[RMDB]
RNA sequence: GGGAACGACUCGAGUAGAGUCGAAAAACUACCAUCAUACCACAUGCUCUCAACAGCCCUGCGAGGCAGAUAUUAUAGAUAUCAUCAUCCCAUUGUACAGAUGAGGAAACUGAGAACUAAGAAGGGAGAAAUCAUGCUAUUUCGAUAGCAUGAUUUCAAAAGAAACAACAACAACAAC
Reactivity to 2A3 in 0.01 (KOAc 150mM, MgCl2 10mM, bicine 150mM(pH8.5), 24C), signal-to-noise 4, nucleotides 027 to 126: a000c070u090a050c020c010a040u100c030a030u080a130c030c010a010c010a080u080g010c010u000c000u000c040a060a160c010a080g000c020c000c020u150g030c060g050a130g000g030c020a010g020a010u090a020u090u130a160u080a100g080a060u040a020u070c030a000u030c000a050u050c010c010c000a000u010u030g020u040a130c060a100g050a050u020g040a100g130g010a040a040a010c020u040g020a010g020a090a020c030u060a090a030g090a080a080g080g000g020a090
Reactivity to DMS in 0.01 (KOAc 150mM, MgCl2 10mM, bicine 150mM(pH8.5), 24C), signal-to-noise 5, nucleotides 027 to 126: a070c080u010a100c050c010a110u010c110a100u000a110c040c040a070c070a060u000g000c050u010c020u010c040a060a130c120a110g020c020c030c010u020g030c160g040a100g010g010c060a080g010a050u000a030u000u000a140u000a080g010a040u000a040u000c000a090u000c080a110u010c000c010c020a070u000u000g010u010a090c150a100g010a050u000g010a100g020g000a040a040a090c070u000g000a090g000a070a070c070u010a060a090g010a100a070g000g010g000a190

Chemical mapping of a 177-nucleotide RNA with 2A3 and DMS. 2A3 adducts were read by reverse transcription with SuperScript II with manganese. The data come from the RNA Mapping Database (RMDB), library OK2TST. Conditions: 150 mM KOAc, 10 mM MgCl2 and 150 mM bicine (pH 8.5), 24 C. Values cover nucleotides 27 to 126.